[RMDB]
RNA sequence: GGGAACGACUCGAGUAGAGUCGAAAAGUUUAGAACAUCUGACACCCGAAGAAAGGUCUUCUCUACCUUGUGAACAUUCCAUCAAGCGAAAUCUGAGGUAUCAGAGAACUAGUCAAUGUCCACGGGUGUAGGUAUUUAAAUUCGUUUAAAUACCUACAAAAGAAACAACAACAACAAC
Reactivity to 2A3 in 0.01 (KOAc 150mM, MgCl2 10mM, bicine 150mM(pH8.5), 24C), signal-to-noise 6, nucleotides 027 to 126: g010u020u100u150a070g020a120a030c020a110u030c040u040g010a030c020a040c030c020c020g030a040a020g080a070a100a000g060g020u010c040u080u010c020u020c010u010a040c000c010u090u070g090u070g080a050a040c030a100u040u050c050c010a090u130c160a190a030g060c050g120a030a040a040u010c010u020g010a010g050g040u060a070u130c050a010g020a000g000a030a020c020u030a020g060u030c030a050a110u100g020u010c020c030a030c020g050g000g000u030
Reactivity to DMS in 0.01 (KOAc 150mM, MgCl2 10mM, bicine 150mM(pH8.5), 24C), signal-to-noise 8, nucleotides 027 to 126: g000u000u000u020a070g010a110a100c080a090u010c080u010g000a070c040a090c020c000c040g020a130a110g010a060a080a070g010g010u000c040u000u000c030u000c070u010a050c020c010u000u000g010u010g010a040a060c140a100u000u000c050c040a130u010c190a100a120g000c090g000a040a050a080u000c010u000g000a040g010g010u000a050u000c050a020g010a030g000a030a040c030u000a090g010u000c070a030a040u010g000u000c010c040a130c070g000g000g020u000
Conditions: 150 mM KOAc, 10 mM MgCl2 and 150 mM bicine (pH 8.5), 24 C. Structure probing data (2A3 and DMS) for a 177-nucleotide construct. 2A3 adducts were read by reverse transcription with SuperScript II with manganese. For 2A3, 9,284 sequencing reads were counted. Values cover nucleotides 27 to 126.